RNA sequence: GGGAACGACUCGAGUAGAGUCGAAAAGUAGAGUUCGCUCUACAGUGACCGUAGGUUUCUCUACCCACCUGUCCGAACUACUCAUUCACUUUCGAAAGAGAGUGACAUGAGCGGACAGAGGAGAAACCUAAACGGGAGAUCGACCAUUCGUGGUCAAAAAUAGUUCAACGUUCGCGUUGAACUAUUUAAAAGAAACAACAACAACAAC
Reactivity to 2A3 in 0.01 (KOAc 150mM, MgCl2 10mM, bicine 150mM(pH8.5), 24C), signal-to-noise 3, nucleotides 027 to 156: g010u010a000g010a010g040u080u140c230g050c090u000c000u000a010c020a020g060u020g160a090c010c010g000u010a010g000g020u000u010u000c010u010c010u060a200c050c050c000a060c000c000u000g000u000c010c000g030a070a050c080u180a050c000u300c000a000u000u000c000a000c000u020u000u000c020g050a060a080a040g000a010g000a000g000u000g000a000c010a010u000g010a010g000c010g000g000a000c000a000g000a000g000g010a000g000a000a000a000c010c000u000a060a070a000c010g000g070g010a070g040a100u110c090g020a020c000c020a040u080u100c190g090u050g040g000u010c020a000a060
Reactivity to DMS in 0.01 (KOAc 150mM, MgCl2 10mM, bicine 150mM(pH8.5), 24C), signal-to-noise 3, nucleotides 027 to 156: g020u000a010g010a030g030u000u010c300g050c010u000c000u010a010c010a180g010u000g030a070c000c000g000u000a030g000g020u000u000u000c000u000c010u020a060c020c000c020a300c180c000u000g000u000c010c010g050a130a280c030u000a130c010u000c010a010u000u010c010a000c000u000u000u000c000g010a230a120a300g000a020g020a000g030u000g020a010c170a000u010g010a020g000c000g010g010a030c000a010g000a090g030g010a030g000a000a010a000c000c000u000a000a020a050c030g020g000g000a170g010a100u010c050g010a030c010c000a120u000u000c190g010u000g040g000u010c010a000a040
Chemical mapping of a 207-nucleotide RNA with 2A3 and DMS. The data come from the RNA Mapping Database (RMDB), library RNAMAK. 2A3 adducts were read by reverse transcription with SuperScript II with manganese. The RNA was probed in 150 mM KOAc, 10 mM MgCl2 and 150 mM bicine (pH 8.5) at 24 C. The 2A3 profile rests on 5,168 reads. For DMS the reverse transcriptase was MarathonRT.